[RMDB]
RNA sequence: GGGAACGACUCGAGUAGAGUCGAAAAUGCCGAGGAGAGGCCGGAGACGGAGAGGCAGGAGGUCCCGAGGAGUAUCCAAGCAAAGAAGGGGAAGGAUCUCGAGGAAGACAUCUCCCAAGAAGAAGCGACAUCCCCAACUUCGGUUGGGGAAAAAGAAACAACAACAACAAC
Reactivity to 2A3 in 0.01 (KOAc 150mM, MgCl2 10mM, bicine 150mM(pH8.5), 24C), signal-to-noise 1, nucleotides 027 to 129: u070g070c010c000g020a010g010g010a080g000a030g000g060c000c080g030g000a070g000a000c020g000g030a020g000a000g050g010c010a000g030g010a000g050g020u080c000c000c020g040a060g000g000a010g000u070a000u090c040c050a010a010g000c030a140a100a060g110a020a020g040g010g000g010a010a020g030g020a040u020c010u060c050g000a000g010g010a010a010g020a010c020a090u050c020u000c010c000c010a010a000g010a010a010g000a000a000g040c000g000a020c000a050
Reactivity to DMS in 0.01 (KOAc 150mM, MgCl2 10mM, bicine 150mM(pH8.5), 24C), signal-to-noise 4, nucleotides 027 to 129: u040g010c040c030g000a070g020g010a080g000a100g060g050c030c080g040g040a070g010a080c150g020g000a070g030a090g030g130c150a000g020g010a010g050g080u010c050c010c010g000a080g040g010a090g020u040a040u000c090c080a110a130g010c090a070a070a110g010a090a120g050g000g030g000a070a030g000g010a040u050c080u040c070g010a050g000g030a000a000g040a170c130a100u040c060u040c030c020c000a070a070g010a020a040g030a070a080g030c000g090a050c070a110
Structure probing data (2A3 and DMS) for a 170-nucleotide construct. For 2A3 the reverse transcriptase was SuperScript II with manganese. High DMS reactivity at an A or C suggests that its Watson-Crick edge is free. For DMS, 5,714 sequencing reads were counted. The reactions ran in a buffer of 150 mM KOAc, 10 mM MgCl2 and 150 mM bicine (pH 8.5), at 24 C. It was measured as part of the RMDB library 15KLIB.